[RMDB]
RNA sequence: GGGAACGACUCGAGUAGAGUCGAAAAGCUCGUUCAUCCUGGUGCCCGGCAUCGACGUUCCGUUCCACUCGCGGGUGCUGCGGGUUGGUGUCGCGGAGUUCCGCCGUUCGCUGGACCGCGUGAUGCCGGCUCACCCUACGUUCGCGUAGGGUGAGCCAAAAGAAACAACAACAACAAC
Reactivity to 2A3 in 0.01 (KOAc 150mM, MgCl2 10mM, bicine 150mM(pH8.5), 24C), signal-to-noise 2, nucleotides 027 to 126: g010c000u020c000g050u060u050c000a080u070c020c010u040g030g000u030g030c000c000c070g000g000c000a020u030c010g120a060c000g010u060u120c010c020g050u040u020c000c000a000c010u000c000g040c020g100g060g010u170g070c140u050g000c060g030g040g050u100u160g020g030u080g060u110c010g000c010g040g020a040g020u110u000c020c030g000c030c030g060u070u100c120g000c020u070g010g010a040c000c010g040c040g050u040g010a010u070g040c030c000
The data come from the RNA Mapping Database (RMDB), library OK1LIB. The record gives the reactivity of an RNA of 177 nucleotides to 2A3. Conditions: 150 mM KOAc, 10 mM MgCl2 and 150 mM bicine (pH 8.5), 24 C.